Conditions: 150 mM KOAc, 10 mM MgCl2 and 150 mM bicine (pH 8.5), 24 C. An RNA of 177 nucleotides, treated with 2A3 and DMS and read out base by base. High 2A3 reactivity points to a flexible backbone, as in loops and unpaired stretches.

RNA sequence: GGGAACGACUCGAGUAGAGUCGAAAACAGCUCUGAGCGCUGAGCAGUACCGCUUGGAAGUAUCUAAGCUGCCGCUGAACGCAUCCGAAGCCGAGAUGGCUGCGCUGCGCGAGCGUCGUAAGGCAGGCCGCCAUAGAAGCUUCGGCUUCUAUGGCGGAAAAGAAACAACAACAACAAC
Reactivity to 2A3 in 0.01 (KOAc 150mM, MgCl2 10mM, bicine 150mM(pH8.5), 24C), signal-to-noise 1, nucleotides 027 to 126: c000a010g030c020u000c020u090g020a000g000c030g060c040u110g020a030g000c040a000g050u070a060c040c050g030c010u040u030g070g020a180a040g090u140a150u180c040u070a050a010g050c010u020g040c040c000g000c060u000g050a050a000c010g010c020a110u000c020c030g030a070a010g000c020c010g110a140g050a180u200g050g000c000u020g000c070g060c020u120g000c040g000c030g050a040g070c060g140u110c020g060u060a080a020g080g000c030a000g070g050
Reactivity to DMS in 0.01 (KOAc 150mM, MgCl2 10mM, bicine 150mM(pH8.5), 24C), signal-to-noise 2, nucleotides 027 to 126: c060a120g000c000u000c070u000g010a150g010c040g010c020u000g000a010g000c080a060g020u000a120c190c180g000c030u020u000g000g020a060a160g030u010a090u000c030u000a040a080g000c000u000g000c040c020g000c040u000g020a080a070c050g000c010a030u010c080c020g020a070a020g010c010c000g020a120g040a140u020g000g020c010u000g000c080g020c140u000g010c030g010c080g010a040g010c060g010u000c080g010u010a080a120g010g000c020a120g010g000